[RMDB]
RNA sequence: GGGAACGACUCGAGUAGAGUCGAAAACGCCUGCACAAUUUCAGCCCAAGCUUCUAGAGAGUGGUGAUGACUUGCAUAUGAGGGCAGCAAUGCAAGUCGGUGUGCUCCCCAUUCUGUGGGACAUGACAAACUUACCACAGUUCGCUGUGGUAAGUUUAAAAGAAACAACAACAACAAC
Reactivity to DMS in 0.01 (KOAc 150mM, MgCl2 10mM, bicine 150mM(pH8.5), 24C), signal-to-noise 2, nucleotides 027 to 126: c270g020c090c010u010g040c030a100c110a120a130u010u020u010c090a110g010c010c020c050a090a100g030c070u010u000c020u010a080g000a060g000a040g000u000g000g000u020g000a090u010g000a010c010u000u000g030c000a010u000a120u000g000a110g010g000g000c030a030g020c020a080a030u000g000c000a010a020g000u010c010g010g000u000g020u000g000c120u010c040c030c000c010a070u000u010c150u020g020u000g020g000g020a040c090a070u000g020a110c210
Reactivity to 2A3 in 0.01 (KOAc 150mM, MgCl2 10mM, bicine 150mM(pH8.5), 24C), signal-to-noise 1, nucleotides 027 to 126: c040g000c040c020u070g000c060a020c000a030a230u050u120u200c030a020g040c000c010c020a040a040g070c030u130u000c040u090a080g040a050g000a040g300u110g010g000u090g030a050u140g020a040c000u020u000g010c030a000u100a170u110g060a190g050g000g000c010a030g000c020a020a030u000g000c020a010a000g000u000c010g000g040u100g000u030g030c030u080c000c000c010c000a040u150u100c050u140g070u110g000g060g010a030c020a070u060g020a010c040

The record gives the reactivity of an RNA of 177 nucleotides to DMS and 2A3. Source: RMDB library OK2TST, as collected in RNAgym. Reactivities are rounded to 0.1 and cut off at 0 and 3. The reactions ran in a buffer of 150 mM KOAc, 10 mM MgCl2 and 150 mM bicine (pH 8.5), at 24 C.